[RMDB]
Conditions: 150 mM KOAc, 10 mM MgCl2 and 150 mM bicine (pH 8.5), 24 C. Structure probing data (DMS and 2A3) for a 177-nucleotide construct. Reactivities are rounded to 0.1 and cut off at 0 and 3. For 2A3 the reverse transcriptase was SuperScript II with manganese. For DMS the reverse transcriptase was MarathonRT. The data come from the RNA Mapping Database (RMDB), library OK1LIB. The 2A3 profile rests on 5,534 reads. High DMS reactivity at an A or C suggests that its Watson-Crick edge is free.

RNA sequence: GGGAACGACUCGAGUAGAGUCGAAAAGGGCAGCCUAUUCGCCGCACUCUUCAACAGUGUCAGCGCGGUAUUCACCACGCCACACCGGUUUCUGUAUGACCCGUUGGGAUUCCUCAGACUGCUCACCCACGUGGACGUAGUUCGCUACGUCCACGUGAAAAGAAACAACAACAACAAC
Reactivity to DMS in 0.01 (KOAc 150mM, MgCl2 10mM, bicine 150mM(pH8.5), 24C), signal-to-noise 3, nucleotides 027 to 126: g000g000g000c060a030g000c030c010u010a100u040u050c040g000c040c030g000c040a060c040u000c080u020u030c120a110a120c160a040g000u000g010u020c200a130g010c030g000c080g010g000u000a030u060u020c150a040c000c040a050c050g000c010c120a080c050a050c100c040g000g010u000u030u010c010u000g020u030a040u010g000a070c150c000c040g020u000u000g010g000g000a170u020u010c040c050u000c050a040g020a080c030u000g000c000u000c040a050c000c050
Reactivity to 2A3 in 0.01 (KOAc 150mM, MgCl2 10mM, bicine 150mM(pH8.5), 24C), signal-to-noise 7, nucleotides 027 to 126: g000g010g000c010a020g010c000c020u080a120u070u140c040g010c030c000g000c010a030c010u060c040u170u110c050a100a130c040a080g010u010g050u110c060a060g030c020g000c040g080g000u040a110u050u140c050a050c050c010a020c030g020c000c000a060c010a010c030c010g030g010u010u140u040c080u090g160u090a180u190g060a090c010c000c010g030u080u090g030g000g030a090u080u060c020c000u020c010a040g010a150c030u030g010c010u020c020a070c000c010